[RMDB]
RNA sequence: GGGAACGACUCGAGUAGAGUCGAAAAUUGCGCUUGCCUAUUUAGGCAUACUUCUCAGGAUGGCGCGUUGCAGUCCAACAAGACCCAGGGACUGUACAGAAUUUUCCUAUACCUCGAGUCGGGUUUGAAAACGUUAGGCACUUCGGUGCCUAACGAAUCCAAUGAUGUGGUUCGCCACAUCAUUGGAAAAAGAAACAACAACAACAAC
Reactivity to 2A3 in 0.01 (KOAc 150mM, MgCl2 10mM, bicine 150mM(pH8.5), 24C), signal-to-noise 2, nucleotides 027 to 156: u040u080g000c010g010c020u050u050g010c010c010u120a200u150u260u300a020g010g000c010a010u040a040c060u100u120c100u030c090a030g090g020a110u110g020g000c000g010c020g030u000u000g000c010a000g000u010c000c000a040a020c030a170a140g120a210c010c070c010a020g050g000g000a000c000u000g000u000a000c000a020g150a040a030u000u000u000u000c010c000u030a040u030a070c020c050u040c000g010a020g000u040c050g000g060g000u110u110u020g030a040a020a000a020c010g010u000u000a000g000g000c000a010c030u030u040c240g040g000u000g000c010c000u000a000a000c000g010a000a000

Source: RMDB library M2RFPK, as collected in RNAgym. This 207-nucleotide RNA was probed chemically with 2A3. The 2A3 profile rests on 999 reads. The RNA was probed in 150 mM KOAc, 10 mM MgCl2 and 150 mM bicine (pH 8.5) at 24 C.